[RMDB]
RNA sequence: GGGAACGACUCGAGUAGAGUCGAAAAACCGGCGGUAAAUCAACUCAGUUGAAAGCCGCGAGCGCUUUGGGUGCGAACUCAAAGGACAGCAGAUCCGGUGUAAUUCCGGGGCCUACGGUUAGAGUCCAAAAGAGGUUAUCGUUCGCGAUAACCUCAAGAAUCUUGUAUUGUUCGCAAUACAAGAUUCAAAAGAAACAACAACAACAAC
Reactivity to DMS in 0.01 (KOAc 150mM, MgCl2 10mM, bicine 150mM(pH8.5), 24C), signal-to-noise 1, nucleotides 027 to 156: a140c000c020g070g050c050g010g020u000a020a140a250u000c010a020a030c020u020c100a200g030u000u010g000a060a180a300g000c000c000g010c000g020a100g000c050g020c020u020u000u000g000g010g040u000g000c300g000a220a020c000u000c000a010a050a030g040g020a120c020a140g040c060a040g010a080u000c040c000g030g030u020g000u020a190a300u010u000c010c000g000g000g000g020c040c040u000a020c010g000g020u000u010a040g000a220g010u010c020c060a110a040a080a200g020a040g020g020u000u000a010u020c000g060u010u020c240g040c000g010a020u010a000a020c000c000u010c000a000a020
Reactivity to 2A3 in 0.01 (KOAc 150mM, MgCl2 10mM, bicine 150mM(pH8.5), 24C), signal-to-noise 2, nucleotides 027 to 156: a000c010c000g020g000c000g020g000u090a190a130a210u040c000a010a010c050u120c300a210g000u020u000g040a050a050a030g020c010c020g010c010g010a040g020c030g010c000u050u000u010g000g000g000u060g050c040g050a110a030c000u010c000a000a010a000g040g030a090c030a060g030c000a020g020a040u040c000c010g000g000u010g010u080a040a080u090u020c010c020g000g020g010g020c000c020u040a020c020g000g000u010u040a040g020a050g170u070c020c000a050a070a020a080g010a000g010g000u000u010a000u010c010g000u060u050c150g000c010g090a000u000a000a020c000c000u000c000a000a000